[RMDB]
RNA sequence: GGGAACGACUCGAGUAGAGUCGAAAAAGCCAAGGCCGUUUUAAUGGUUCGCCAACUGGGUGGAUCCGGCAACUCGUGUGCAAAUGGACGCUGGUACCCUCUGCACGCAGCUGCCUCACGUGCGUCCACUAUACCCACCCUUCGGGGUGGGUAUAGUAAAAGAAACAACAACAACAAC
Reactivity to 2A3 in 0.01 (KOAc 150mM, MgCl2 10mM, bicine 150mM(pH8.5), 24C), signal-to-noise 7, nucleotides 027 to 126: a000g040c030c010a040a030g090g010c020c060g030u030u070u070u170a170a120u180g010g000u010u030c000g020c020c000a170a210c150u180g120g000g000u020g000g000a020u020c020c030g020g000c000a020a030c020u050c090g020u050g000u020g030c000a030a060a160u130g020g010a030c050g050c210u140g070g090u300a270c000c000c000u020c020u030g000c000a010c010g000c000a010g000c010u030g010c000c020u050c010a050c020g070u110g020c010g010u030c030c020
Reactivity to DMS in 0.01 (KOAc 150mM, MgCl2 10mM, bicine 150mM(pH8.5), 24C), signal-to-noise 2, nucleotides 027 to 126: a110g000c010c030a130a160g030g010c010c030g030u000u020u020u040a080a100u040g000g030u000u000c000g000c070c020a190a090c140u010g000g000g040u000g000g000a020u000c040c120g010g020c070a020a060c040u010c090g000u000g020u000g020c000a050a050a090u020g000g010a070c060g000c080u000g060g020u010a100c060c000c000u000c080u000g000c050a000c030g010c000a030g000c130u020g030c000c010u020c100a030c130g000u040g010c100g000u010c010c030